[RMDB]
RNA sequence: GGGAACGACUCGAGUAGAGUCGAAAAUCACAAAGCGGAUUUAGCUCGGUUGGGAGAGGUCCAGACCGAAGAUCUGGUUGUCCUGUGGUCGAGGCACAGAAUUCGCACCAUAAACAACGGGAGAUUCAUAUAGCGACUCAUUCGUGAGUCGCUAUAUAAAAGAAACAACAACAACAAC
Reactivity to DMS in 0.01 (KOAc 150mM, MgCl2 10mM, bicine 150mM(pH8.5), 24C), signal-to-noise 4, nucleotides 027 to 126: u030c030a110c130a090a100a100g000c060g000g000a020u000u010u020a130g020c010u010c000g000g020u000u010g000g000g000a060g000a120g050g000u020c030c050a040g000a050c040c060g020a110a070g020a290u000c000u000g000g000u010u000g010u000c040c070u000g000u040g020g020u020c020g010a040g010g030c080a100c180a090g000a020a060u020u010c000g030c070a060c080c090a030u020a090a050a050c110a070a090c080g000g000g010a050g000a120u020u020c070
Reactivity to 2A3 in 0.01 (KOAc 150mM, MgCl2 10mM, bicine 150mM(pH8.5), 24C), signal-to-noise 4, nucleotides 027 to 126: u070c000a000c060a100a120a010g030c040g000g000a010u000u040u100a050g000c020u000c020g100g000u080u190g040g050g000a090g010a020g010g080u050c000c000a010g030a000c010c130g180a060a050g050a110u020c010u010g020g000u030u010g080u070c000c030u090g020u050g030g080u040c010g000a020g120g020c080a030c010a140g040a010a020u030u010c000g000c010a020c000c000a040u210a080a140a020c090a040a010c060g070g050g000a040g010a060u070u040c100
An RNA of 177 nucleotides, treated with DMS and 2A3 and read out base by base.
High 2A3 reactivity points to a flexible backbone, as in loops and unpaired stretches.
The reactions ran in a buffer of 150 mM KOAc, 10 mM MgCl2 and 150 mM bicine (pH 8.5), at 24 C.